RNA sequence: GGGAACGACUCGAGUAGAGUCGAAAACGAAGGAAUGCCUGACGGUCACUGUUGCCUUUGGGAUUUCAGGCGUGCAGGUCACGCGUAUUCUGGACAGCAUUGCGCUGUUUCGCGGCUAUCCGGCGACAACUCAGAGGAGGUUCGCCUCCUCUGAGUUAAAAGAAACAACAACAACAAC
Reactivity to DMS in 0.01 (KOAc 150mM, MgCl2 10mM, bicine 150mM(pH8.5), 24C), signal-to-noise 3, nucleotides 027 to 126: c080g000a140a110g030g020a080a150u000g010c010c000u000g010a040c080g010g010u000c040a100c090u000g020u000u000g000c020c010u000u020u010g000g020g000a050u000u010u000c130a070g010g000c020g020u000g000c050a140g000g020u000c020a020c030g000c020g010u010a110u000u000c050u000g010g010a000c010a010g000c020a140u010u010g010c190g010c040u010g010u000u000u000c050g010c080g010g000c030u000a190u000c030c000g000g030c050g000a070c130
Reactivity to 2A3 in 0.01 (KOAc 150mM, MgCl2 10mM, bicine 150mM(pH8.5), 24C), signal-to-noise 2, nucleotides 027 to 126: c020g050a050a010g090g010a050a030u100g130c020c020u030g010a020c010g020g000u020c020a020c210u120g110u180u100g030c030c000u080u060u050g000g010g020a040u050u100u120c050a070g180g010c020g000u010g000c040a060g120g140u180c020a000c040g000c020g010u030a110u130u000c050u040g000g020a010c000a010g030c010a070u110u250g030c080g000c030u030g090u040u040u060c050g000c060g000g000c000u050a100u070c010c000g010g020c030g050a040c060
Structure probing data (DMS and 2A3) for a 177-nucleotide construct. The 2A3 profile rests on 2,070 reads. 2A3 adducts were read by reverse transcription with SuperScript II with manganese. Values cover nucleotides 27 to 126. Conditions: 150 mM KOAc, 10 mM MgCl2 and 150 mM bicine (pH 8.5), 24 C.